[RMDB]
RNA sequence: GGGAACGACUCGAGUAGAGUCGAAAAGAAACAAAUCUGAGUUUUUUGAAGAUACCAUCUAAAAUCCAAAUAUCCCAGGAUAAAGAUGGGAAUAGACACUUGGCUCUAGAUGCAGUGGGCUAAGUGAGGUACCCACUCCUGGACCAAUCAAAUGUGACGAUUACUAAUUAUUCGUAAUUAGUAAUCGAAAAGAAACAACAACAACAAC
Reactivity to 2A3 in 0.01 (KOAc 150mM, MgCl2 10mM, bicine 150mM(pH8.5), 24C), signal-to-noise 4, nucleotides 027 to 156: g040a000a070a000c080a030a120a040u150c110u160g070a110g150u030u030u020u040u230u230g040a040a030g030a030u090a080c000c010a020u020c020u050a070a160a070a040u050c040c020a100a090a050u130a080u070c020c010c010a010g000g000a010u060a060a140a010g030a030u000g010g010g030a010a070u100a020g080a020c030a010c090u020u020g000g020c020u010c000u020a100g010a150u170g040c040a030g050u050g030g020g030c020u030a060a020g040u030g030a020g060g000u070a070c000c020c000a000c020u000c010c020u020g020g020a020c030c010a020a050u140c080a080a080a060u150g070u120g080a010
Reactivity to DMS in 0.01 (KOAc 150mM, MgCl2 10mM, bicine 150mM(pH8.5), 24C), signal-to-noise 1, nucleotides 027 to 156: g030a220a160a170c020a060a030a060u020c090u000g010a180g010u010u000u000u000u020u020g000a150a120g040a180u010a110c020c020a000u000c020u000a060a110a140a070u020c020c000a000a120a010u000a090u010c060c000c010a300g000g010a030u000a070a220a110g000a030u000g020g030g010a060a150u000a110g000a240c010a030c060u000u000g030g000c050u010c000u000a090g020a190u010g040c040a070g030u000g020g000g020c060u000a030a100g020u000g000a020g030g020u010a080c020c020c030a070c280u000c010c020u030g030g000a060c020c020a030a000u000c040a100a090a060u000g000u000g020a200

The record gives the reactivity of an RNA of 207 nucleotides to 2A3 and DMS. The data come from the RNA Mapping Database (RMDB), library OK3TST. Reactivities are given for positions 27 through 156.